[RMDB]
RNA sequence: GGGAACGACUCGAGUAGAGUCGAAAAUUAGCAUUACCAUAUCCUAUUUGGCAAUGAAUUUCACUUUAGACAAUCCAAUCUUAAGAACAUACUCUAGUAUAUGAAAUUCAUUGCCAAAUAGGAUAUGCAAUCAGGUUCCGUUCGCGGAACCUGAUUGAAAAGAAACAACAACAACAAC
Reactivity to DMS in 0.01 (KOAc 150mM, MgCl2 10mM, bicine 150mM(pH8.5), 24C), signal-to-noise 1, nucleotides 027 to 126: u020u030a100g000c100a100u010u000a090c250c030a030u000a010u000c010c000u000a010u000u000u000g010g000c010a000a000u010g000a000a010u000u000u000c000a140c080u000u010u000a010g010a000c040a100a100u030c210c180a050a150u010c010u020u000a040a090g000a130a130c150a020u000a010c110u010c110u010a090g010u000a030u000a110u010g000a000a020a020u000u000c000a010u000u000g010c020c010a000a000a000u000a010g000g000a000u000a010u000g020